[RMDB]
RNA sequence: GGGAACGACUCGAGUAGAGUCGAAAAUGUUAGCGGAAGGGAUUCGAAAUUACUCACCGGUGAUACGAGGAGUGGCGGAAACCAACGCCAGAGUCACGGUGACUCAGCGUGGACAGACGAUAUAUGAGUUUCGGUACUUGUUCGCAAGUACCGAAACAAAAGAAACAACAACAACAAC
Reactivity to DMS in 0.01 (KOAc 150mM, MgCl2 10mM, bicine 150mM(pH8.5), 24C), signal-to-noise 3, nucleotides 027 to 126: u000g020u000u010a080g040c050g000g040a210a030g000g000g000a160u000u010c080g000a050a150a090u010u030a080c040u010c080a120c060c040g000g000u010g000a110u020a050c090g010a080g000g000a070g040u000g020g010c040g000g000a080a050a140c110c030a100a110c030g000c020c010a090g000a080g000u010c010a140c230g000g010u030g010a020c060u000c020a140g010c030g020u000g000g010a110c170a050g000a110c060g010a090u000a040u010a040u010g030a110
Reactivity to 2A3 in 0.01 (KOAc 150mM, MgCl2 10mM, bicine 150mM(pH8.5), 24C), signal-to-noise 1, nucleotides 027 to 126: u130g000u050u000a030g000c060g040g040a010a000g050g000g040a020u110u070c040g030a110a080a060u120u050a110c000u030c030a080c010c010g000g020u080g000a070u110a130c040g000a040g020g040a100g060u050g000g040c000g010g000a150a030a010c040c030a040a030c020g000c010c010a010g000a020g000u000c010a010c230g150g060u200g010a010c000u000c050a020g010c010g000u010g040g070a050c030a060g060a020c060g030a010u020a010u000a010u250g060a080
Chemical mapping of a 177-nucleotide RNA with DMS and 2A3. The reactions ran in a buffer of 150 mM KOAc, 10 mM MgCl2 and 150 mM bicine (pH 8.5), at 24 C. For DMS, 1,641 sequencing reads were counted. 2A3 adducts were read by reverse transcription with SuperScript II with manganese.